[RMDB]
RNA sequence: GGGAACGACUCGAGUAGAGUCGAAAAAGAGAGCGCGAAAAAGAUCGAUCGAUCGUUUGAACGCGCAAGUUUAAGUUUGAUACGGGCAUACUAGCUAGCUACCUAGCAAAACAAACUUAAUAAAGAACUAGCAGUACCAGUUCGCUGGUACUGCUAGAAAAGAAACAACAACAACAAC
Reactivity to DMS in 0.01 (KOAc 150mM, MgCl2 10mM, bicine 150mM(pH8.5), 24C), signal-to-noise 1, nucleotides 027 to 126: a040g030a210g020a140g000c010g010c000g020a050a110a070a010a040g000a030u000c000g000a100u000c210g030a000u000c000g000u000u000u000g000a290a090c000g000c000g070c030a040a030g010u000u000u000a050a030g010u000u000u000g030a150u010a100c030g000g000g000c050a030u000a040c100u000a080g020c060u020a020g000c100u010a090c190c000u010a080g000c050a090a100a060a100c000a000a010a000c000u000u000a000a000u000a080a160a130g010a140a090
An RNA of 177 nucleotides, treated with DMS and read out base by base. The RNA was probed in 150 mM KOAc, 10 mM MgCl2 and 150 mM bicine (pH 8.5) at 24 C. The DMS profile rests on 619 reads. Source: RMDB library M2PK90, as collected in RNAgym.